Conditions: 150 mM KOAc, 10 mM MgCl2 and 150 mM bicine (pH 8.5), 24 C.
An RNA of 207 nucleotides, treated with 2A3 and DMS and read out base by base.
The 2A3 profile rests on 6,755 reads.
For 2A3 the reverse transcriptase was SuperScript II with manganese.
Reactivities are given for positions 27 through 156.
DMS adducts were read by reverse transcription with MarathonRT.
RNA sequence: GGGAACGACUCGAGUAGAGUCGAAAAACGAGGCCGAGCCUACUACGGUAGGCACGGCCUCGAAUUACGUUCAUCUACUUAAUCGUAGACGCAUCAAUACAUCAUUCAUGGAACGGGGGAUGGUGAAACUAGAAUCAAACGUUCGCGUUUGAUUCAACAUUGACUAUACGUUCGCGUAUAGUCAAUGAAAAGAAACAACAACAACAAC
Reactivity to 2A3 in 0.01 (KOAc 150mM, MgCl2 10mM, bicine 150mM(pH8.5), 24C), signal-to-noise 4, nucleotides 027 to 156: a000c010g000a000g000g020c000c000g000a000g000c050c000u000a000c010u020a020c210g120g000u000a000g010g000c010a000c000g000g000c000c000u000c000g000a000a000u010u020a000c000g000u000u010c010a020u000c010u010a020c010u050u160a100a050u200c060g000u010a010g020a030c010g010c010a080u120c070a080a160u120a230c010a010u010c000a010u020u010c010a020u040g070g000a010a000c010g000g000g010g000g000a000u000g000g030u010g040a070a010a020c120u110a060g000a000a000u000c000a000a000a010c000g040u070u050c290g010c010g120u000u020u000g000a000u000u000c000a000a000
Reactivity to DMS in 0.01 (KOAc 150mM, MgCl2 10mM, bicine 150mM(pH8.5), 24C), signal-to-noise 2, nucleotides 027 to 156: a140c020g000a050g060g040c000c010g000a030g050c020c000u000a050c010u000a090c190g100g020u000a030g010g010c000a020c000g020g020c000c000u000c010g000a000a060u000u010a080c030g020u010u010c030a300u000c000u000a010c010u000u000a130a120u000c250g000u000a040g030a060c050g000c060a130u000c110a120a130u000a110c020a020u000c010a100u000u000c030a100u010g040g000a070a090c020g000g020g000g020g000a060u000g010g020u000g000a130a060a120c090u010a130g050a010a000u010c000a010a020a000c010g010u000u000c300g020c040g050u010u000u000g000a020u010u000c010a050a160
Source: RMDB library M2RFPK, as collected in RNAgym.